[RMDB]
RNA sequence: GGGAACGACUCGAGUAGAGUCGAAAAGAUAUGGACCACUGUGGCGGAGCUUUGAUCUCGGAAACGAGGGAGCUUACCAUUGGUCCUAAGUCAAAGGUAGAGAGUCCGUUCGCGGACUCUCUACCAACAGAGAAUCAACGUUCGCGUUGAUUCUCUGAAAAGAAACAACAACAACAAC
Reactivity to DMS in 0.01 (KOAc 150mM, MgCl2 10mM, bicine 150mM(pH8.5), 24C), signal-to-noise 2, nucleotides 027 to 126: g000a060u010a300u010g000g010a000c010c000a010c300u000g020u010g010g030c010g000g010a010g000c000u010u010u010g010a050u020c000u000c000g000g000a050a080a090c030g020a000g010g000g000a010g020c010u000u000a070c010c010a030u000u010g000g000u010c000c000u000a010a060g000u000c000a040a110a120g000g010u010a000g010a030g000a010g010u000c010c000g020u010u010c140g020c020g040g000a020c000u010c000u010c000u000a000c000c010a030a040

This 177-nucleotide RNA was probed chemically with DMS. Values are in units of 0.01, from 0 to 300, in steps of 10. DMS adducts were read by reverse transcription with MarathonRT. Source: RMDB library TTRDEL, as collected in RNAgym. Conditions: 150 mM KOAc, 10 mM MgCl2 and 150 mM bicine (pH 8.5), 24 C. High DMS reactivity at an A or C suggests that its Watson-Crick edge is free.